Overview
Chemical mapping of a 177-nucleotide RNA with 2A3 and DMS. The reactions ran in a buffer of 150 mM KOAc, 10 mM MgCl2 and 150 mM bicine (pH 8.5), at 24 C. For 2A3 the reverse transcriptase was SuperScript II with manganese. For DMS the reverse transcriptase was MarathonRT.

RNA sequence: GGGAACGACUCGAGUAGAGUCGAAAAGGUGCUUUCAGGACUCAUAAACCCUGCCUUAACACCGUGAAUGUUGUAGGCUCUUCCCUUGGUUCCGGAGGGGUUUUCACCAUUGAUGGCAGAAGAACUGUCUACCACGUGUGUUCGCACACGUGGUAGAAAAAGAAACAACAACAACAAC
Reactivity to 2A3 in 0.01 (KOAc 150mM, MgCl2 10mM, bicine 150mM(pH8.5), 24C), signal-to-noise 4, nucleotides 027 to 126: g000g000u020g020c050u020u030u070c040a080g060g000a100c000u090c130a100u260a060a110a110c000c000c000u020g000c010c030u050u130a100a040c030a050c030c050g020u040g120a050a030u050g010u040u010g050u030a020g000g020c020u000c010u000u010c040c010c000u040u140g200g000u180u070c080c030g000g030a050g020g000g020g000u010u000u010u070c000a020c000c000a050u060u150g070a070u090g090g050c060a050g020a180a000g010a070a050c070u080g030
Reactivity to DMS in 0.01 (KOAc 150mM, MgCl2 10mM, bicine 150mM(pH8.5), 24C), signal-to-noise 2, nucleotides 027 to 126: g000g000u000g010c050u020u010u050c020a010g020g000a070c060u020c120a180u070a090a080a150c090c020c020u010g020c200c060u000u000a060a120c060a090c030c090g040u030g000a040a070u010g000u020u000g040u010a010g000g010c080u000c000u000u010c000c000c080u000u030g000g040u000u020c070c110g000g000a080g000g000g000g030u000u000u000u000c010a110c000c030a030u000u010g000a110u000g000g010c040a030g000a070a060g000a040a080c060u000g000